The record gives the reactivity of an RNA of 177 nucleotides to 2A3 and DMS.
[RMDB]
RNA sequence: GGGAACGACUCGAGUAGAGUCGAAAACCAUAACAGUUCGCUGUUAUGGACUGUCGGAAUGCGGAAUAAUUAAUCGUCCGCUUACGAUUAAAACCGACUAUAAAGCGUAACACUUCGGUGUUACGAAUAGGAAACUAGGUUUCGACCUAGUUUCCUAAAAAGAAACAACAACAACAAC
Reactivity to 2A3 in 0.01 (KOAc 150mM, MgCl2 10mM, bicine 150mM(pH8.5), 24C), signal-to-noise 2, nucleotides 027 to 126: c010c000a000u010a000a000c000a010g040u040u060c150g070c130u000g000u010u020a000u000g000g040a060c050u070g000u000c000g010g000a130a030u060g000c020g000g090a010a080u160a140a120u220u210a110a110u130c160g030u000c020c010g030c010u010u060a000c020g020a040u060u140a020a000a010a030c020c020g050a000c030u090a060u120a300a120a020g110c020g010u000a010a000c020a000c000u030u080c200g070g000u000g000u010u000a000c000g000a030a040
Reactivity to DMS in 0.01 (KOAc 150mM, MgCl2 10mM, bicine 150mM(pH8.5), 24C), signal-to-noise 2, nucleotides 027 to 126: c040c000a000u000a000a010c000a000g010u000u000c250g020c000u000g010u000u000a000u000g000g000a040c230u000g000u000c000g010g000a120a080u010g020c020g040g010a060a030u000a060a210u030u010a070a110u000c150g010u000c020c010g040c020u020u000a090c090g010a150u000u000a060a050a120a150c010c010g010a080c120u020a090u000a050a080a150g020c020g010u000a000a000c010a010c010u010u010c200g000g020u000g000u010u000a010c000g000a000a030